This 207-nucleotide RNA was probed chemically with 2A3 and DMS. DMS adducts were read by reverse transcription with MarathonRT. For DMS, 4,805 sequencing reads were counted. Values cover nucleotides 27 to 156. The RNA was probed in 150 mM KOAc, 10 mM MgCl2 and 150 mM bicine (pH 8.5) at 24 C.

RNA sequence: GGGAACGACUCGAGUAGAGUCGAAAACCUACUCAAUACGUCCUCCUCGUACAGAACGGUAACAUGUUUUCCGAACAUCCGCGCUUGGGUAUACGAGUAUACACCUUACCCAACCCUCGCCAACGGGAGUGCAUCCACGAGUUCGCUCGUGGAUGAAACCAACGUUAUUGUUCGCAAUAACGUUGGUAAAAGAAACAACAACAACAAC
Reactivity to 2A3 in 0.01 (KOAc 150mM, MgCl2 10mM, bicine 150mM(pH8.5), 24C), signal-to-noise 5, nucleotides 027 to 156: c010c000u010a040c020u050c050a100a100u080a150c040g040u040c010c000u020c000c010u100c020g020u040a040c040a090g060a160a020c020g040g010u090a130a050c040a170u110g000u060u040u060u050c040c040g020a040a010c010a050u040c030c030g030c020g010c070u040u040g030g010g000u030a050u020a070c060g020a020g090u050a020u050a070c110a090c030c040u050u070a030c000c010c000a010a060c020c010c010u030c020g010c050c050a070a050c030g010g000g030a050g040u070g030c010a000u000c000c000a000c000g010a010g000u060u090c170g070c050u000c000g000u000g010g000a000u000g000a010a000
Reactivity to DMS in 0.01 (KOAc 150mM, MgCl2 10mM, bicine 150mM(pH8.5), 24C), signal-to-noise 2, nucleotides 027 to 156: c020c020u000a050c020u000c020a080a100u010a130c030g010u000c000c000u000c010c040u000c100g030u000a150c060a070g010a070a130c040g000g030u030a060a120c100a110u000g000u000u000u000u000c060c040g010a090a100c040a120u000c010c010g050c030g000c040u000u000g010g010g020u000a060u000a070c120g010a070g030u000a080u000a110c130a090c130c070u010u000a040c010c010c000a130a060c020c010c030u010c170g000c030c030a090a060c050g010g020g010a060g030u000g000c000a000u010c000c000a010c000g020a040g040u010u000c300g030c010u000c010g030u010g010g000a000u000g000a020a090